[RMDB]
RNA sequence: GGGAACGACUCGAGUAGAGUCGAAAACUUAGUUUCGACUAAGGAUGACCGUAGGAAUAAGUGUGGCGCACCGUUUGACGUUACAUUCGAAAGAGUGUAACCGAGGUGCGAACUACCACGCUUAUUCCUAAACGGAGAGGCGCGUGUUCGCACGCAAGAAUACAUCGAAGUUCGCUUCGAUGUAUUCAAAAGAAACAACAACAACAAC
Reactivity to DMS in 0.01 (KOAc 150mM, MgCl2 10mM, bicine 150mM(pH8.5), 24C), signal-to-noise 4, nucleotides 027 to 156: c010u000u000a020g010u000u000u010c250g030a070c010u000a020a020g010g020a130u010g010a190c010c030g020u000a050g010g000a040a020u000a010a040g020u000g010u000g020g000c020g010c000a010c000c010g010u010u000u010g040a140c170g020u000u000a010c010a010u000u000c000g000a210a140a290g010a020g030u000g000u010a010a010c010c010g010a050g020g040u000g010c000g020a010a060c030u000a170c010c010a020c010g000c000u000u000a010u000u020c000c000u020a010a000a070c040g010g010a140g010a170g000g010c080g010c010g020u010g010u010u000c150g030c020a050c010g000c020a070a300
Reactivity to 2A3 in 0.01 (KOAc 150mM, MgCl2 10mM, bicine 150mM(pH8.5), 24C), signal-to-noise 6, nucleotides 027 to 156: c000u020u010a010g020u050u120u130c260g080a020c010u010a010a020g060g020a050u130g130a060c010c000g010u020a010g000g000a010a000u010a010a000g000u000g000u000g000g010c010g010c010a000c000c010g040u110u110u240g050a040c030g000u010u000a000c010a000u010u000c010g040a090a060a050g000a010g000u000g000u000a000a000c000c010g010a030g000g010u000g010c000g000a000a000c020u060a020c000c000a000c000g000c010u000u000a000u000u010c000c000u000a010a010a000c000g040g000a110g000a040g150g090c070g000c010g040u030g010u060u110c190g040c080a010c010g010c010a010a050

Structure probing data (DMS and 2A3) for a 207-nucleotide construct. The data come from the RNA Mapping Database (RMDB), library RNAMAK. DMS adducts were read by reverse transcription with MarathonRT. Conditions: 150 mM KOAc, 10 mM MgCl2 and 150 mM bicine (pH 8.5), 24 C.